[RMDB]
RNA sequence: GGGAACGACUCGAGUAGAGUCGAAAAUUGAGCACGAAUCAGAUUACGGUAACUAGGUAGUUAAUAGAAUUCUUGAUGUCCUGGAAGUCAAUUUCGUGUACUGCCUUAGAAUUAAUACACACAGUUCCUAAAUCACCCCGUUCGCGGGGUGAUUUAGAAAAGAAACAACAACAACAAC
Reactivity to DMS in 0.01 (KOAc 150mM, MgCl2 10mM, bicine 150mM(pH8.5), 24C), signal-to-noise 1, nucleotides 027 to 126: u000u010g000a160g020c000a040c070g030a110a030u000c300a040g000a040u000u030a170c080g010g000u020a110a160c080u000a060g000g020u020a110g010u000u000a050a080u080a070g000a060a090u000u030c040u000u000g030a040u000g000u000c040c040u000g030g000a030a110g040u000c010a060a060u000u000u000c080g010u020g000u000a060c010u020g040c040c010u030u030a080g000a060a080u040u010a060a060u010a080c030a060c030a140c180a120g000u000u010c080
Reactivity to 2A3 in 0.01 (KOAc 150mM, MgCl2 10mM, bicine 150mM(pH8.5), 24C), signal-to-noise 3, nucleotides 027 to 126: u090u100g060a000g040c000a000c020g040a000a040u120c020a030g020a120u010u190a080c000g100g010u020a020a020c030u010a000g030g000u040a030g000u030u100a120a060u050a200g150a180a080u160u000c040u030u100g050a070u140g090u010c010c030u040g000g100a030a030g010u000c050a040a060u010u020u010c000g000u000g010u020a060c000u050g020c000c020u040u070a060g060a000a030u050u080a130a090u100a050c100a000c000a000c000a130g110u040u050c000
Structure probing data (DMS and 2A3) for a 177-nucleotide construct. The DMS profile rests on 1,248 reads. The RNA was probed in 150 mM KOAc, 10 mM MgCl2 and 150 mM bicine (pH 8.5) at 24 C. High DMS reactivity at an A or C suggests that its Watson-Crick edge is free. Source: RMDB library OK1LIB, as collected in RNAgym.